[RMDB]
RNA sequence: GGGAACGACUCGAGUAGAGUCGAAAACAAUUGAGCGUCGCACACACACAGACUAUGUCUGACACUGACAGAGCCUAAACCGCUCUGUCAGUGUGCGAGAUAUCGUUCUUAAUGUGAGCAGAGGAAAGUAAAGUAUUUUAUUCGUAAAAUACUUUACAAAAGAAACAACAACAACAAC
Reactivity to DMS in 0.01 (KOAc 150mM, MgCl2 10mM, bicine 150mM(pH8.5), 24C), signal-to-noise 9, nucleotides 027 to 126: c050a110a120u010u010g010a080g020c060g010u000c040g010c020a110c030a030c030a040c090a130c300a030g000a030c010u010a020u000g010u000c000u000g000a030c010a000c010u000g000a010c000a010g000a020g010c000c010u000a040a080a140c300c300g000c000u000c000u000g000u000c000a000g000u000g000u000g010c080g000a010g010a020u000a020u000c040g010u010u000c010u000u000a180a120u000g000u000g000a080g020c020a100g010a080g000g000a050a050a090
Reactivity to 2A3 in 0.01 (KOAc 150mM, MgCl2 10mM, bicine 150mM(pH8.5), 24C), signal-to-noise 6, nucleotides 027 to 126: c010a040a150u090u230g060a060g110c060g120u060c040g010c010a010c000a000c000a000c000a000c020a030g010a010c010u020a020u050g010u000c000u010g020a010c000a000c010u010g000a000c000a000g000a000g000c000c010u060a070a070a050c020c010g000c000u000c000u000g000u000c000a000g000u000g000u000g000c010g060a000g000a000u020a000u020c060g070u250u020c020u020u070a090a070u050g010u010g020a020g010c050a060g050a050g110g060a110a070a060